[RMDB]
RNA sequence: GGGAACGACUCGAGUAGAGUCGAAAAACGGCGUUCGCGCCGUCUAUCGAUAUGGACUGCUAAUAAAGCAGUGGAGGCGUCGUCGGAAACGACGACGCUACCCACCCACUGAACUACUUUAUAACAGUCCUAAGUCCGUGUUCUAGUUCGCUAGAAAAUACUGUUAGAUUUUCGAAUCUAACAGUAUAAAAGAAACAACAACAACAAC
Reactivity to DMS in 0.01 (KOAc 150mM, MgCl2 10mM, bicine 150mM(pH8.5), 24C), signal-to-noise 3, nucleotides 027 to 156: a020c000g010g040c000g030u000u000c260g040c010g040c000c000g000u010c010u000a150u010c030g010a050u000a260u020g010g000a020c000u000g000c000u010a110a070u000a000a010a050g000c010a020g020u000g010g010a300g000g010c020g070u000c000g050u000c000g020g020a080a090a290c010g000a040c000g030a010c010g030c000u000a010c020c010c070a300c200c010c020a040c050u000g030a150a200c060u000a130c020u010u000u000a010u000a050a040c020a020g010u000c000c000u010a050a110g010u000c010c070g020u000g010u000u000c010u000a060g010u000u010c150g020c020u000a040g000a060a120a130
Reactivity to 2A3 in 0.01 (KOAc 150mM, MgCl2 10mM, bicine 150mM(pH8.5), 24C), signal-to-noise 3, nucleotides 027 to 156: a000c020g000g030c020g000u090u110c230g010c010g010c130c000g010u000c030u130a300u200c050g000a000u000a010u040g000g000a000c000u020g000c010u030a070a010u000a010a040a010g000c000a000g010u000g000g000a000g000g000c010g010u000c000g000u010c010g010g010a000a000a000c000g050a000c020g000a000c020g010c000u010a020c000c010c000a010c000c000c010a000c000u010g010a010a010c040u190a040c000u300u000u000a020u010a020a020c000a000g000u010c000c000u000a000a000g000u000c030c060g160u150g130u140u030c010u000a040g010u070u110c200g030c170u040a010g080a070a080a010

Source information:
The record gives the reactivity of an RNA of 207 nucleotides to DMS and 2A3. For 2A3 the reverse transcriptase was SuperScript II with manganese.